[RMDB]
RNA sequence: GGGAACGACUCGAGUAGAGUCGAAAAAGUCAUGUGGGUCAGGUGUGGUAUCAGGAAUAAUGUGGGAGGCCGGAUUGAAGUGCGGGCCAGGAACAAUGGUAACUGUGGGAGACUCAACAAAGAGUGAGUACAGCUGAAGGAGCCGGGGAGCAGAAAACCAUAAAUCAGCAUUCGUGCUGAUUUAUGGAAAAGAAACAACAACAACAAC
Reactivity to 2A3 in 0.01 (KOAc 150mM, MgCl2 10mM, bicine 150mM(pH8.5), 24C), signal-to-noise 1, nucleotides 027 to 156: a000g090u050c030a020u040g010u080g090g000g000u030c050a020g010g010u010g070u030g050g060u040a070u140c020a010g050g070a010a090u110a110a050u230g030u030g040g000g020a010g010g010c070c030g040g000a030u020u080g030a090a010g010u030g190c010g000g010g090c030c000a010g020g010a000a020c050a040a140u130g030g010u060a040a050c020u010g000u060g040g000g000a040g030a000c010u000c010a000a090c030a040a180a000g030a070g020u030g000a000g020u030a060c030a060g000c030u020g020a070a050g040g030a020g020c050c000g000g000g000g000a000g000c030a000g030a010a080a000a000